[RMDB]
RNA sequence: GGGAACGACUCGAGUAGAGUCGAAAAAGUUACAGUGCCUUGAAAAACGGUAGUCAAUCUCACGGUGCUCACCUCCACAAGCUUGGUUACCUCCGAGCGUAGUGUGUAACCACGAACAACGCUGACACAUGCGUACGCUCUUCGGAGCGUACGCAUGAAAAGAAACAACAACAACAAC
Reactivity to DMS in 0.01 (KOAc 150mM, MgCl2 10mM, bicine 150mM(pH8.5), 24C), signal-to-noise 1, nucleotides 027 to 126: a120g000u000u000a090c060a080g000u000g050c010c040u000u000g000a080a030a150a050a000c050g000g000u000a060g020u000c040a100a060u000c060u000c020a100c220g000g000u000g010c000u030c060a140c060c010u000c060c060a060c100a040a120g040c050u000u000g050g000u000u000a080c120c070u000c020c020g000a020g060c070g000u000a050g000u000g010u000g010u000a090a110c070c000a030c180g010a050a090c170a130a180c040g040c080u000g020a050c150a170